[RMDB]
RNA sequence: GGGAACGACUCGAGUAGAGUCGAAAACCGAAGCCCCAUUGAGGGAUAAUACAGGCUCUCCCAUCCAUCUCCUAUUCCAACACGUCCUCGUCGUACAGAGUGGUAACAUGUGUCACCACAUAUCCAACAUAGUGUCGCAUCUUCGGAUGCGACACAAGCAUUAUUAAACCUUCGGGUUUAAUAAUGCAAAAGAAACAACAACAACAAC
Reactivity to 2A3 in 0.01 (KOAc 150mM, MgCl2 10mM, bicine 150mM(pH8.5), 24C), signal-to-noise 3, nucleotides 027 to 156: c000c000g020a080a060g050c000c040c010c000a160u060u110g050a170g060g010g000a040u090a050a070u130a080c100a020g040g010c000u000c000u010c010c000c000a020u060c020c010a110u040c070u030c030c020u050a070u050u090c020c020a020a010c010a010c070g040u030c020c020u040c010g030u040c020g020u070a040c060a060g120a070g070u040g030g010u050a070a020c040a140u110g060u030g040u120c030a020c030c000a020c020a030u120a040u040c040c040a020a030c020a190u160a080g000u000g010u020c000g010c000a000u000c010u030u040c120g120g000a010u000g010c000g000a000c010a000c000a000a000
Reactivity to DMS in 0.01 (KOAc 150mM, MgCl2 10mM, bicine 150mM(pH8.5), 24C), signal-to-noise 1, nucleotides 027 to 156: c020c020g000a140a190g000c050c000c000c030a300u000u010g020a120g010g010g010a090u000a040a060u000a070c080a070g030g010c040u000c040u010c030c020c010a110u010c040c020a130u000c030u010c010c010u000a150u010u010c030c010a060a100c070a040c020g030u000c030c010u000c060g020u010c030g000u000a180c120a100g010a180g070u000g030g030u010a060a020c040a150u000g020u010g020u000c010a020c030c000a050c000a140u000a120u010c000c050a020a070c110a090u000a100g020u010g000u000c000g020c010a000u000c010u000u020c300g000g010a000u000g000c000g020a010c000a000c010a010a190

An RNA of 207 nucleotides, treated with 2A3 and DMS and read out base by base. The RNA was probed in 150 mM KOAc, 10 mM MgCl2 and 150 mM bicine (pH 8.5) at 24 C. The 2A3 profile rests on 1,893 reads.